[RMDB]
RNA sequence: GGGAACGACUCGAGUAGAGUCGAAAAGAUAUGGACCGUGAACUACGACGGUAAACGCAACAGCCGUGUAACUUUCGGAAACGAAAGUUACACGGACAUGCGUUUAAAUGUCGCACGGUCCUAAGUCGCUAUCCAUAAACUUCGGUUUAUGGAUAGCAAAAGAAACAACAACAACAAC
Reactivity to 2A3 in 0.01 (KOAc 150mM, MgCl2 10mM, bicine 150mM(pH8.5), 24C), signal-to-noise 2, nucleotides 027 to 126: g100a040u140a100u190g000g020a000c000c000g000u000g030a100a090c170u250a060c300g020a000c010g010g040u030a000a030a000c000g000c020a010a110c030a300g190c020c010g060u000g010u000a010a010c010u000u000u000c000g020g000a070a040a040c030g010a000a000a000g000u000u000a010c000a000c030g000g020a000c000a020u000g000c000g000u000u000u000a000a030a020u200g000u000c010g040c000a010c010g040g000u000c000c000u000a000a010g030u000c070
Reactivity to DMS in 0.01 (KOAc 150mM, MgCl2 10mM, bicine 150mM(pH8.5), 24C), signal-to-noise 3, nucleotides 027 to 126: g010a110u010a300u010g020g010a000c000c010g020u000g000a120a060c200u000a300c000g010a010c000g000g010u000a030a000a000c000g020c010a010a080c300a220g000c020c000g010u000g010u000a010a000c000u000u000u020c010g010g000a100a060a210c010g020a000a000a000g010u000u000a000c000a000c000g000g000a010c040a110u000g000c010g000u010u000u010a000a030a060u010g010u000c000g000c010a010c000g000g010u000c000c000u010a010a090g010u000c080